This 177-nucleotide RNA was probed chemically with DMS and 2A3. The DMS profile rests on 1,518 reads. Reactivities are given for positions 27 through 126. The data come from the RNA Mapping Database (RMDB), library OK2TRN.
RNA sequence: GGGAACGACUCGAGUAGAGUCGAAAAGGAUCAUGGUCAACAACGACCUGGUCGACGACGCCGGGGCCCGGGAGCUCGCUCGGGAGAUAGCCCGGAAGAUCGAGGAGGAUCUCCGGUAUCCCGGUCGCAGAGUUUGACAAUUCGUUGUCAAACUCUGAAAAGAAACAACAACAACAAC
Reactivity to DMS in 0.01 (KOAc 150mM, MgCl2 10mM, bicine 150mM(pH8.5), 24C), signal-to-noise 2, nucleotides 027 to 126: g000g000a000u000c000a020u000g070g010u000c000a130a170c270a120a130c180g020a000c020c010u010g000g040u000c030g000a090c070g000a170c180g010c020c000g000g000g020g010c130c010c010g010g010g010a160g020c190u010c150g010c010u010c000g010g000g000a040g000a090u000a230g000c170c010c010g000g000a020a060g010a030u000c000g020a170g030g010a250g000g000a050u000c010u000c000c010g000g000u010a070u000c000c000c010g010g000u000c090g030
Reactivity to 2A3 in 0.01 (KOAc 150mM, MgCl2 10mM, bicine 150mM(pH8.5), 24C), signal-to-noise 1, nucleotides 027 to 126: g090g010a020u030c030a070u300g010g010u050c060a110a120c030a050a070c300g000a000c000c000u000g000g000u020c000g000a060c040g030a010c080g010c030c030g000g030g000g000c010c000c000g000g050g020a090g130c060u060c150g100c020u000c010g030g090g000a040g020a010u140a010g010c000c020c000g030g020a050a040g000a030u040c040g020a080g110g130a040g150g000a100u000c030u000c000c000g040g020u030a070u070c010c000c030g000g020u050c010g000